[RMDB]
Chemical mapping of a 177-nucleotide RNA with 2A3 and DMS. Values cover nucleotides 27 to 126. The data come from the RNA Mapping Database (RMDB), library OK2TRN. The 2A3 profile rests on 16,104 reads.
RNA sequence: GGGAACGACUCGAGUAGAGUCGAAAAGGAUUUUGGGCCAAGCUAGAAGGAUUCAAUCCCGGGGGUAUGAAAGACCGCCCCGCGCUGUACAUGGUCGAAUGCGCGCGCGCCCGGGGCGAUAUCGCGCGCCAAUAUCCUUCUUCGGAAGGAUAUUGGCAAAAGAAACAACAACAACAAC
Reactivity to 2A3 in 0.01 (KOAc 150mM, MgCl2 10mM, bicine 150mM(pH8.5), 24C), signal-to-noise 8, nucleotides 027 to 126: g030g010a060u070u090u170u200g030g000g000c040c030a070a020g030c040u090a060g050a160a050g150g020a050u090u100c030a050a080u050c000c000c000g010g000g010g000g010u140a100u260g130a150a070a050g040a040c020c040g020c000c000c000c000g020c010g000c030u070g040u200a080c040a160u190g050g050u090c020g000a070a010u080g010c020g000c000g000c000g000c010g000c030c060c050g010g010g000g000c020g010a030u060a020u100c040g000c000g000c020
Reactivity to DMS in 0.01 (KOAc 150mM, MgCl2 10mM, bicine 150mM(pH8.5), 24C), signal-to-noise 9, nucleotides 027 to 126: g000g000a080u000u000u000u000g010g010g010c020c040a070a110g010c060u000a090g010a110a100g000g000a060u000u000c070a090a140u000c010c010c010g020g000g010g000g020u010a090u010g010a080a090a110g000a070c120c010g000c010c010c010c010g010c120g020c040u010g010u010a070c140a060u010g010g010u010c080g000a080a070u000g010c020g010c010g010c120g010c080g010c030c080c060g010g000g010g010c010g000a060u000a050u000c040g010c060g020c110
The RNA was probed in 150 mM KOAc, 10 mM MgCl2 and 150 mM bicine (pH 8.5) at 24 C.